Source: RMDB libraries RFM100 and RFMREP, as collected in RNAgym. Structure probing data (2A3 and DMS) for a 177-nucleotide construct. The 2A3 profile rests on 1,982 reads. Conditions: 150 mM KOAc, 10 mM MgCl2 and 150 mM bicine (pH 8.5), 24 C.
RNA sequence: GGGAACGACUCGAGUAGAGUCGAAAAGAAGCCAGCUUGGAAUGUGGCUCAUGAUCUGAGGAAUCCAAUCAUUCAAUUGGGUGAAAAGCCACCAAAAAGCGCCGCCCAUCAGCACGAUAUUCAUGAGGUACCCGGUUUAAUUCGUUAAACCGGGUACAAAAGAAACAACAACAACAAC
Reactivity to 2A3 in 0.01 (KOAc 150mM, MgCl2 10mM, bicine 150mM(pH8.5), 24C), signal-to-noise 3, nucleotides 027 to 126: g070a050a010g020c010c030a020g010c030u040u070g010g030a140a090u100g030u010g020g010c000u000c030a060u070g090a060u050c130u200g060a070g060g100a050a020u010c030c000a030a010u010c020a190u250u080c050a070a120u030u020g020g020g000u040g050a030a030a060a100g040c000c000a000c000c000a000a070a000a000a000g000c020g000c020c000g030c000c030c010a040u090c030a000g100c030a020c120g050a040u070a080u140u130c070a090u140g090a030g120
Reactivity to DMS in 0.01 (KOAc 150mM, MgCl2 10mM, bicine 150mM(pH8.5), 24C), signal-to-noise 2, nucleotides 027 to 126: g000a090a140g010c040c040a050g040c000u040u000g000g000a140a190u070g010u030g000g040c000u000c050a080u020g020a060u020c070u000g000a050g010g030a260a010u040c060c020a060a030u000c230a160u000u050c130a090a060u000u020g000g000g000u000g000a090a080a130a190g040c000c030a040c000c140a040a100a050a080a080g000c010g020c070c030g000c020c010c000a060u030c030a010g050c030a030c030g010a070u000a080u010u020c040a060u020g000a110g040